[RMDB]
RNA sequence: GGGAACGACUCGAGUAGAGUCGAAAAACUUCUUCUCUCAGUGCGCCAGCCGAUUUCUGCUGCUUGCAGAGGAGGAGGAGCAUCUGGCAGACGCAGCGUUGACGACGUCCGAGGGCCCAUUGCCGUAGGCAUUGUCAUGCUUCGGCAUGGCAAUGCCAAAAGAAACAACAACAACAAC
Reactivity to 2A3 in 0.01 (KOAc 150mM, MgCl2 10mM, bicine 150mM(pH8.5), 24C), signal-to-noise 9, nucleotides 027 to 126: a000c030u040u010c000u030u000c010u000c000u000c030a060g080u030g090c020g030c050c020a040g020c030c050g120a150u060u170u080c030u070g040c010u030g020c030u110u210g010c030a020g010a040g060g040a020g010g010a030g010g010a020g000c010a050u040c030u060g030g000c030a020g010a060c030g010c030a050g020c050g060u090u110g070a080c070g010a020c020g040u020c020c010g030a060g020g020g010c010c010c000a060u050u160g050c040c030g040u050a080
Reactivity to DMS in 0.01 (KOAc 150mM, MgCl2 10mM, bicine 150mM(pH8.5), 24C), signal-to-noise 5, nucleotides 027 to 126: a050c040u000u000c010u000u000c010u000c010u010c080a110g020u030g010c020g000c300c020a040g000c050c120g000a250u030u020u020c020u010g030c010u020g010c080u010u020g030c030a030g010a130g000g000a070g000g000a070g000g010a040g020c050a060u000c020u000g010g020c030a040g000a070c050g000c090a070g010c110g010u010u000g000a170c080g000a080c040g010u000c020c030g000a060g020g000g000c010c020c030a090u020u010g000c050c020g010u020a090